[RMDB]
RNA sequence: GGGAACGACUCGAGUAGAGUCGAAAACAAUCAACGCGGAAAAACCUGGAACAAAUAAAAGAUCGACACCAGGCCGCGAAGUCGAUCUAAAUGGCGUGGAACUAGCCAUCACGCCUAGGCUAGUAAACAUCCGUAUGACCUUCGGGUCAUACGGAUGAAAAGAAACAACAACAACAAC
Reactivity to 2A3 in 0.01 (KOAc 150mM, MgCl2 10mM, bicine 150mM(pH8.5), 24C), signal-to-noise 2, nucleotides 027 to 126: c000a000a000u220c060a010a070c010g000c000g020g050a100a060a030a000a020c040c000u040g000g000a120a190c080a070a100a070u250a060a070a000a020g020a050u060c030g000a010c090a030c060c000a000g010g040c010c000g000c000g000a000a000g000u040c050g010a000u010c020u040a170a080a080u150g100g020c140g040u120g000g090a080a050c020u030a030g060c030c030a030u000c000a000c120g060c000c000u000a000g020g010c010u010a030g000u040a090a070a020
Reactivity to DMS in 0.01 (KOAc 150mM, MgCl2 10mM, bicine 150mM(pH8.5), 24C), signal-to-noise 1, nucleotides 027 to 126: c040a150a180u000c130a130a060c050g000c000g000g000a030a070a060a110a090c000c010u000g030g000a280a040c110a030a040a040u100a070a000a140a000g000a110u000c000g040a000c160a030c050c060a000g050g010c010c000g000c000g030a020a070g000u000c000g000a000u000c000u000a180a040a070u050g000g000c210g020u000g000g000a110a020c090u010a050g000c150c080a080u060c060a030c020g040c120c110u010a020g000g000c050u000a070g000u000a070a030a190